This 177-nucleotide RNA was probed chemically with 2A3 and DMS. Reactivities are rounded to 0.1 and cut off at 0 and 3. It was measured as part of the RMDB libraries RFM100 and RFMREP. The RNA was probed in 150 mM KOAc, 10 mM MgCl2 and 150 mM bicine (pH 8.5) at 24 C.

RNA sequence: GGGAACGACUCGAGUAGAGUCGAAAAGAAGUGGUCACGGUUACUUCUCCAACCUCAAUGGGCGGAAGCGGUGCAAGCCGUUCCGGGUUCGAUUCCCGGCAUGAAGUGGCCCGUCCGUGACCCGAACCCUCUUAGUUUUAUUCGUAAAACUAAGAGGAAAAGAAACAACAACAACAAC
Reactivity to 2A3 in 0.01 (KOAc 150mM, MgCl2 10mM, bicine 150mM(pH8.5), 24C), signal-to-noise 9, nucleotides 027 to 126: g110a090a020g070u100g100g000u000c000a000c010g010g020u090u140a100c040u050u030c050u030c040c030a140a150c020c040u140c060a050a100u140g000g000g000c010g030g110a010a000g000c000g020g000u050g060c090a130a060g010c000c000g000u010u000c000c000g000g000g000u000u010c010g000a000u000u010c000c000c010g000g000c020a050u150g040a070a010g020u020g010g000c000c000c000g010u000c000c000g000u000g000a000c000c000c000g040a050a050c000
Reactivity to DMS in 0.01 (KOAc 150mM, MgCl2 10mM, bicine 150mM(pH8.5), 24C), signal-to-noise 9, nucleotides 027 to 126: g000a070a040g020u020g020g010u000c000a010c000g000g000u010u010a090c070u010u000c010u020c100c080a120a120c100c070u010c130a070a060u020g010g000g010c040g010g000a030a020g000c000g000g000u000g000c300a090a140g000c010c000g000u000u000c000c000g000g000g000u000u000c020g000a300u010u010c000c000c000g000g000c100a030u000g020a110a030g000u000g000g000c000c000c010g010u020c000c000g010u000g000a000c010c000c220g000a090a130c070